Chemical mapping of a 177-nucleotide RNA with DMS. DMS adducts were read by reverse transcription with MarathonRT. Values cover nucleotides 27 to 126. Conditions: 150 mM KOAc, 10 mM MgCl2 and 150 mM bicine (pH 8.5), 24 C.
RNA sequence: GGGAACGACUCGAGUAGAGUCGAAAAAUGGCUGUGGCCUAUUUGGGAAAGGGAGCAUUGUGGCAUGCGCCAAAUUCACUUGUGCCAAAUCCAUGAGUUUGUUUGAGGUUGAUCAGACCAAAAUUCAUCACAGGUUGAGGUUCGCCUCAACCUGUGAAAAAGAAACAACAACAACAAC
Reactivity to DMS in 0.01 (KOAc 150mM, MgCl2 10mM, bicine 150mM(pH8.5), 24C), signal-to-noise 1, nucleotides 027 to 126: a020u000g010g000c030u010g050u020g000g020c150c050u000a110u000u000u000g000g000g010a090a100a050g030g020g000a030g010c090a090u000u010g020u030g020g000c120a120u000g000c160g030c070c000a010a040a100u010u000c020a040c050u000u000g000u020g010c020c020a030a090a060u010c090c000a050u000g000a100g030u030u000u000g000u000u000u000g010a060g010g020u000u020g020a100u000c180a090g000a100c060c110a040a110a020a070u000u000c120a080